This 207-nucleotide RNA was probed chemically with 2A3 and DMS. The RNA was probed in 150 mM KOAc, 10 mM MgCl2 and 150 mM bicine (pH 8.5) at 24 C. Values cover nucleotides 27 to 156. For 2A3 the reverse transcriptase was SuperScript II with manganese. For DMS, 2,760 sequencing reads were counted.
RNA sequence: GGGAACGACUCGAGUAGAGUCGAAAAGUGGUGUGCUUUUUUCUGCGUGCGUCUUCACGGGCGUCGCGCGGGCCCCGCUCUUUUUUAUUACGUUUCCUUCGGGGGGCGUGACUCGUGGGUACCCAACCGUGCUGUAAACUGAACCAACGGGAUUGCCGGAUAAGUCUUAGUUCGCUAAGACUUAUCCAAAAGAAACAACAACAACAAC
Reactivity to 2A3 in 0.01 (KOAc 150mM, MgCl2 10mM, bicine 150mM(pH8.5), 24C), signal-to-noise 3, nucleotides 027 to 156: g070u070g070g070u040g030u110g060c040u150u190u100u040u060u130c040u090g000c010g010u020g010c000g010u020c000u180u190c150a070c080g000g000g010c020g050u170c050g030c000g000c000g010g020g000c000c010c000c010g000c000u070c050u060u140u040u000u080u060a120u140u110a030c000g000u000u020u050c000c000u010u100c140g010g000g000g000g000g000c010g020u010g010a010c010u010c040g010u060g020g020g020u070a080c020c010c000a020a040c000c020g030u040g010c060u060g030u140a130a160a140c060u060g080a040a050c040c030a030a030c020g040g000g040a120u080u180g060c050c070
Reactivity to DMS in 0.01 (KOAc 150mM, MgCl2 10mM, bicine 150mM(pH8.5), 24C), signal-to-noise 1, nucleotides 027 to 156: g040u000g010g030u000g010u000g010c030u020u000u000u010u000u000c000u010g060c020g040u010g000c030g080u000c020u000u000c200a120c300g020g050g060c000g010u000c040g050c040g020c050g100g020g000c020c010c020c010g070c030u000c000u020u000u000u050u020u000a080u000u000a060c030g010u000u000u000c010c000u010u000c150g000g020g020g030g010g030c010g020u000g010a040c040u000c110g030u000g020g020g000u000a040c030c020c010a060a160c010c040g000u000g020c050u010g000u000a070a060a210c060u000g010a070a100c050c000a020a030c000g020g010g020a130u000u000g000c020c070